[RMDB]
RNA sequence: GGGAACGACUCGAGUAGAGUCGAAAACGUCAUUCGUGACGCUUUUUGAUAUGGACUGAUUGUAAGCGGACGCUAAGACAGCAAAUUCGGAAACGAAUUUGUCGAGCGUCCGAACUACUUACAUCAGUCCUAAGUCUUAUCCCCCGUUCGCGGGGAAUCAUCAAAUCCGGUUCGCCGGAUUUGAUGAAAAAGAAACAACAACAACAAC
Reactivity to 2A3 in 0.01 (KOAc 150mM, MgCl2 10mM, bicine 150mM(pH8.5), 24C), signal-to-noise 2, nucleotides 027 to 156: c010g000u000c000a040u050u170c300g130u060g010a020c010g030c020u090u050u000u090u090g000a000u020a000u020g000g000a000c000u000g000a050u300u050g010u010a010a000g000c010g000g000a000c010g000c000u140a140a000g000a000c000a010g020c000a000a010a000u000u010c000g030g000a010a000a000c000g000a000a010u000u010u010g030u040c000g010a000g010c000g000u000c000c000g000a000a000c000u040a010c000u000u000a000c000a000u000c000a000g000u000c000c000u000a000a000g000u000c000u050u160a240u220c000c020c010c000c030g050u140u160c090g000c120g040g040g200g020a050a040
Conditions: 150 mM KOAc, 10 mM MgCl2 and 150 mM bicine (pH 8.5), 24 C. The record gives the reactivity of an RNA of 207 nucleotides to 2A3.